Chemical mapping of a 207-nucleotide RNA with DMS and 2A3. The reactions ran in a buffer of 150 mM KOAc, 10 mM MgCl2 and 150 mM bicine (pH 8.5), at 24 C.
RNA sequence: GGGAACGACUCGAGUAGAGUCGAAAAGGGGUCCGAACGAUAAGAUCGGAAGGAGCAUCGAUCUACACUGAAGCCUCCACGGUGUAGGGAGCUCCGCGAUCUUUUGACGUUCGGACGGAGGCACCCAAAGAGCAAGUGGUUUCGACCACUUGCUCAAUGAUCUGGUAUCUUUCGAGAUACCAGAUCAAAAAGAAACAACAACAACAAC
Reactivity to DMS in 0.01 (KOAc 150mM, MgCl2 10mM, bicine 150mM(pH8.5), 24C), signal-to-noise 1, nucleotides 027 to 156: g000g020g000g040u000c030c010g020a010a030c010g040a090u000a050a040g010a060u010c000g050g020a230a140g050g010a040g000c010a180u000c100g010a120u000c000u000a000c000a020c020u000g020a000a110g040c010c010u000c030c000a300c020g020g000u020g000u000a040g000g030g000a050g030c000u000c000c010g000c000g000a030u010c000u000u000u010u000g020a070c030g010u000u000c000g000g010a010c010g000g000a010g140g040c030a180c030c000c010a050a120a140g000a050g040c010a030a020g020u030g020g020u010u000u000c300g000a090c000c010a000c010u000u010g010c000u000c000a000a110
Reactivity to 2A3 in 0.01 (KOAc 150mM, MgCl2 10mM, bicine 150mM(pH8.5), 24C), signal-to-noise 4, nucleotides 027 to 156: g040g000g090g030u000c010c000g010a010a000c020g060a170u200a300a040g000a010u000c010g090g150a280a170g070g000a010g000c010a030u300c000g000a000u010c000u000a000c000a000c010u040g020a090a010g020c010c000u020c000c010a000c000g000g000u000g010u000a000g000g000g010a000g000c000u000c000c000g000c010g000a000u000c000u020u020u050u170g170a040c010g000u000u000c000g000g000a000c000g000g000a010g000g000c010a020c000c000c010a070a110a010g010a000g010c000a000a000g000u020g010g000u040u220u220c280g060a040c000c000a000c000u010u000g010c000u000c000a000a010